Chemical mapping of a 207-nucleotide RNA with DMS and 2A3.
The reactions ran in a buffer of 150 mM KOAc, 10 mM MgCl2 and 150 mM bicine (pH 8.5), at 24 C.
For DMS, 3,456 sequencing reads were counted.
Reactivities are given for positions 27 through 156.
2A3 adducts were read by reverse transcription with SuperScript II with manganese.
Source: RMDB library OK3TST, as collected in RNAgym.
[RMDB]
RNA sequence: GGGAACGACUCGAGUAGAGUCGAAAAGGGCGAGACGUUAUCUAAAGGUUAUCAUAGGAAUAAUUUGCGUAGCUGGUAUCCUUUUGAUUGUAAUCUCUAUCACAUGUUAUAUUCGAUUUCGUCAUAUGCGAUAUAAACCAUAUGAAGUGAUCAACCCCACUUACAGGGUGUUCGCACCCUGUAAGUGAAAAGAAACAACAACAACAAC
Reactivity to DMS in 0.01 (KOAc 150mM, MgCl2 10mM, bicine 150mM(pH8.5), 24C), signal-to-noise 2, nucleotides 027 to 156: g020g010g040c300g020a040g030a050c040g030u000u000a050u000c040u000a030a050a060g030g010u000u000a000u000c020a040u010a200g020g010a140a060u010a120a130u020u000u000g010c110g040u000a200g050c110u000g010g000u010a080u010c010c000u000u000u000u000g000a000u000u000g020u000a070a020u000c010u000c030u010a150u020c000a050c060a180u000g000u000u000a120u000a130u000u000c080g010a030u010u000u000c030g030u000c010a050u000a010u000g000c050g000a140u030a110u000a060a100a150c170c030a060u000a030u000g010a020a030g010u000g000a030u000c000a050a070c010c040c000
Reactivity to 2A3 in 0.01 (KOAc 150mM, MgCl2 10mM, bicine 150mM(pH8.5), 24C), signal-to-noise 6, nucleotides 027 to 156: g060g010g020c060g010a010g010a030c060g040u200u040a020u010c020u040a020a020a010g010g000u030u040a020u030c010a030u150a120g080g050a170a120u190a260a140u160u160u250g130c120g060u110a080g090c070u020g020g000u000a020u040c000c000u000u010u000u040g030a030u020u040g030u060a050a080u000c020u010c020u060a070u140c020a040c020a080u130g100u270u130a120u060a070u230u150c040g020a030u100u030u010c020g010u010c020a010u000a000u020g020c040g020a010u030a010u050a260a160a070c010c010a000u010a000u020g010a030a010g010u010g050a010u020c000a020a130c000c000c000